Annotation: This 207-nucleotide RNA was probed chemically with 2A3 and DMS. The reactions ran in a buffer of 150 mM KOAc, 10 mM MgCl2 and 150 mM bicine (pH 8.5), at 24 C.
RNA sequence: GGGAACGACUCGAGUAGAGUCGAAAAAUGGACGCUAAAUGGAAACAGGAGGUACACAAUGAGUACGUUAAGAGAGUUGAGGCUGCGAAGAGCACUCAAAGAGCAAUCGAUGCGGUAUCUGCUAAGUAUCAAGAAGACCUUGCCGCGCUGGAAGGGACCGGAGUUAACUAUUCGUAGUUAACUCCGGAAAAGAAACAACAACAACAAC
Reactivity to 2A3 in 0.01 (KOAc 150mM, MgCl2 10mM, bicine 150mM(pH8.5), 24C), signal-to-noise 2, nucleotides 027 to 156: a000u070g000g020a000c030g020c090u140a150a020a010u090g090g020a020a130a010c050a060g000g040a030g040g000u040a020c070a000c000a050a090u110g040a050g040u060a010c020g000u050u090a050a010g040a010g000a010g040u010u080g020a020g090g000c080u090g030c030g040a120a010g020a040g060c000a030c040u050c030a060a110a000g030a000g030c030a030a050u080c060g040a040u130g010c010g000g020u010a070u090c010u030g010c010u070a120a020g000u020a100u160c070a050a040g020a050a010g050a050c000c040u020u110g030c020c020g030c010g030c100u030g000g020a010a030g060g000g000a000
Reactivity to DMS in 0.01 (KOAc 150mM, MgCl2 10mM, bicine 150mM(pH8.5), 24C), signal-to-noise 1, nucleotides 027 to 156: a040u000g000g030a060c020g000c070u020a030a070a090u010g000g010a110a040a110c100a090g000g000a050g000g010u030a130c050a120c070a080a040u000g000a080g000u000a040c050g000u000u000a050a080g010a070g030a190g040u000u000g000a110g010g010c070u020g000c040g010a110a040g010a150g010c030a070c010u000c070a040a070a160g010a110g020c030a050a050u000c070g010a070u020g000c040g000g040u000a090u000c030u000g020c040u000a060a050g050u010a110u010c100a060a100g000a040a070g040a030c040c010u000u000g020c010c030g000c070g090c030u020g030g030a160a010g000g000g000a230
2A3 adducts were read by reverse transcription with SuperScript II with manganese. The 2A3 profile rests on 1,075 reads. The data come from the RNA Mapping Database (RMDB), library OK3TST.